[RMDB]
RNA sequence: GGGAACGACUCGAGUAGAGUCGAAAAGAAAGAAAGAAAGCGGUUGGGUGGGUCCAUCGACCGUCGUGGCGUAUUCGGACGCUUUACCACGACGCGAGGAAAUAGUGAGACCGACCACCCCCUUUAACAGAGGUAUAGUAGUUCGCUACUAUACCAAGCGUUCUGUAAUGUUCGCAUUACAGAACGCAAAAGAAACAACAACAACAAC
Reactivity to 2A3 in 0.01 (KOAc 150mM, MgCl2 10mM, bicine 150mM(pH8.5), 24C), signal-to-noise 1, nucleotides 027 to 156: g070a000a000a010g030a040a130a000g050a010a090a000g080c160g080g140u120u120g090g010g030u090g030g000g050u010c000c010a100u090c000g010a060c000c060g010u000c000g000u000g000g000c000g010u080a140u200u210c100g040g100a000c000g000c010u170u090u120a040c050c030a000c000g000a000c000g010c040g020a070g010g100a010a080a000u070a020g050u070g010a120g030a060c010c010g000a000c010c000a010c000c000c000c000c010u000u080u040a140a120c180a080g090a020g070g000u000a010u000a000g010u000a000g000u020u080c240g030c070u000a000c000u000a000u000a000c000c000a000a000
This 207-nucleotide RNA was probed chemically with 2A3. Source: RMDB library M2RFPK, as collected in RNAgym. Reactivities are given for positions 27 through 156. The reactions ran in a buffer of 150 mM KOAc, 10 mM MgCl2 and 150 mM bicine (pH 8.5), at 24 C.